[RMDB]
The record gives the reactivity of an RNA of 177 nucleotides to DMS and 2A3.
The RNA was probed in 150 mM KOAc, 10 mM MgCl2 and 150 mM bicine (pH 8.5) at 24 C.
RNA sequence: GGGAACGACUCGAGUAGAGUCGAAAAUCUGCCCAGUGUCCGGCGACGCGUAGCACGGCGAUCCCCGACGUCGGGAACUUCUCCGAGAUGCGUUCCGCGACAGCGGCGUCGGUGCCGCUGAUGCUGGUACGUAUGUCCUAUUCGUAGGACAUACGUAAAAAGAAACAACAACAACAAC
Reactivity to DMS in 0.01 (KOAc 150mM, MgCl2 10mM, bicine 150mM(pH8.5), 24C), signal-to-noise 9, nucleotides 027 to 126: u010c110u000g010c060c010c010a100g020u010g010u000c020c030g020g010c090g010a130c140g010c030g020u010a080g020c080a100c020g010g000c050g000a080u010c090c100c020c020g010a130c140g010u000c010g010g010g010a040a040c050u000u000c030u000c090c070g000a110g010a060u000g010c240g010u000u000c020c000g020c070g010a120c080a060g010c040g000g000c010g010u010c130g010g010u010g020c050c010g010c010u000g000a120u000g000c010u000g010g010
Reactivity to 2A3 in 0.01 (KOAc 150mM, MgCl2 10mM, bicine 150mM(pH8.5), 24C), signal-to-noise 9, nucleotides 027 to 126: u020c030u110g070c010c000c010a050g060u050g050u080c020c010g020g010c040g020a020c010g000c010g050u060a030g050c050a020c060g010g000c010g020a100u120c040c010c000c010g090a160c090g070u160c010g000g000g020a030a030c050u100u040c020u030c060c090g160a140g020a190u090g060c050g030u020u000c030c010g120c030g080a020c020a010g010c010g010g020c010g010u050c080g080g110u170g000c010c010g000c010u020g010a040u160g000c010u010g000g030